RNA sequence: GGGAACGACUCGAGUAGAGUCGAAAAUUUUGACAAUUUUGAUGGUAAUGUGUCAUGCCCCUGUAUGUCCAGGAUGCACAGCUCUAUGGAUAUUCAGCGUAGCCAUUGCUGCAAUAGCAGAAGUCACCGCAUCCCCUAAAUUCGUUUAGGGGAUGCGAAAAGAAACAACAACAACAAC
Reactivity to 2A3 in 0.01 (KOAc 150mM, MgCl2 10mM, bicine 150mM(pH8.5), 24C), signal-to-noise 1, nucleotides 027 to 126: u030u020u010u050g020a000c020a080a010u000u060u130u260g130a150u180g030g050u100a090a020u040g100u010g030u150c030a040u020g030c050c000c000c000u000g000u040a010u040g020u010c000c010a020g000g000a050u070g020c090a080c040a300g000c030u030c020u130a300u030g000g000a010u000a030u040u000c060a020g010c000g080u040a010g020c020c030a020u070u070g010c000u020g010c030a080a280u060a300g000c030a010g020a160a020g080u040c080a000c060
Reactivity to DMS in 0.01 (KOAc 150mM, MgCl2 10mM, bicine 150mM(pH8.5), 24C), signal-to-noise 1, nucleotides 027 to 126: u000u000u000u000g020a020c050a080a060u000u000u000u010g020a100u000g000g000u010a060a060u010g020u010g010u010c070a060u000g000c000c050c020c030u000g000u010a030u000g000u000c040c000a040g030g010a000u000g020c030a150c200a150g020c040u000c020u010a090u010g030g020a020u000a010u010u000c000a050g020c300g020u000a120g000c020c050a040u000u000g000c040u010g000c030a040a040u000a020g050c020a050g010a050a090g020u000c080a050c210